[RMDB]
RNA sequence: GGGAACGACUCGAGUAGAGUCGAAAAGCACAAUGGGAGGAAGCCUGAUGCAGCGCCGCAGCGUGAGGGAUGAAGGCCUUCGGGUUGUAAACCUCCUUCAGCAGGGACGAUGCGUGAGUGGCGGUACAAUAAUAAAGUUAUUCGUAACUUUAUUAUUAAAAGAAACAACAACAACAAC
Reactivity to 2A3 in 0.01 (KOAc 150mM, MgCl2 10mM, bicine 150mM(pH8.5), 24C), signal-to-noise 8, nucleotides 027 to 126: g040c020a020c030a050a110u090g020g000g010a040g020g010a050a010g020c000c010u010g010a030u060g000c020a020g010c010g010c000c000g030c070a020g010c010g050u090g010a010g010g030g000a020u300g010a040a000g010g000c000c000u020u040c110g050g000g000u010u040g020u020a010a000a000c000c010u040c010c030u060u050c030a040g010c010a020g020g010g040a030c030g020a030u060g000c020g020u030g020a040g020u040g010g000c010g000g000u060a020c030
Reactivity to DMS in 0.01 (KOAc 150mM, MgCl2 10mM, bicine 150mM(pH8.5), 24C), signal-to-noise 9, nucleotides 027 to 126: g010c060a070c110a090a070u010g010g000g010a090g010g000a090a100g010c030c020u010g010a070u020g000c040a060g000c030g010c010c020g000c050a110g000c050g000u010g010a030g000g000g000a030u030g020a200a300g000g000c040c020u000u050c140g010g020g010u000u000g010u010a030a300a270c030c020u000c000c080u000u010c060a080g010c030a080g000g000g010a050c070g000a050u010g000c040g010u010g000a090g020u010g000g010c020g000g010u010a060c120
Conditions: 150 mM KOAc, 10 mM MgCl2 and 150 mM bicine (pH 8.5), 24 C.
Structure probing data (2A3 and DMS) for a 177-nucleotide construct.
For 2A3, 18,488 sequencing reads were counted.
The data come from the RNA Mapping Database (RMDB), library OK1LIB.
2A3 adducts were read by reverse transcription with SuperScript II with manganese.